The record gives the reactivity of an RNA of 207 nucleotides to 2A3. For 2A3, 1,318 sequencing reads were counted. Conditions: 150 mM KOAc, 10 mM MgCl2 and 150 mM bicine (pH 8.5), 24 C. Reactivities are rounded to 0.1 and cut off at 0 and 3.

RNA sequence: GGGAACGACUCGAGUAGAGUCGAAAAACAUGCUGGCCAACCCAACCCCACGAUCCUCCAUCGGCAUGAUCAUGAUGUGUGCUCAAAUAUCAGGCCAGUAAAUCACCAUGCUCGUGCUGGUAAAGGCAACUUAUGCCCAAGUUCGCUUGGGCAUAAAAGAUGCUAAGACGUUCGCGUCUUAGCAUCUAAAAGAAACAACAACAACAAC
Reactivity to 2A3 in 0.01 (KOAc 150mM, MgCl2 10mM, bicine 150mM(pH8.5), 24C), signal-to-noise 2, nucleotides 027 to 156: a020c070a040u100g010c030u010g000g010c010c030a040a010c090c000c000a020a090c000c000c010c030a070c060g100a210u040c000c020u070c030c010a060u020c000g000g000c010a000u030g010a010u000c000a000u030g020a090u080g050u010g000u020g060c020u080c180a120a150a040u230a090u090c080a070g020g020c000c000a000g000u000a010a050a000u070c000a000c050c000a000u000g000c000u010c000g000u000g030c010u000g000g000u050a120a090a010g030g010c030a070a070c050u030u000a000u020g030c000c000c010a000a010g000u040u040c060g000c090u000u020g020g020g000c000a000u010a000a010a000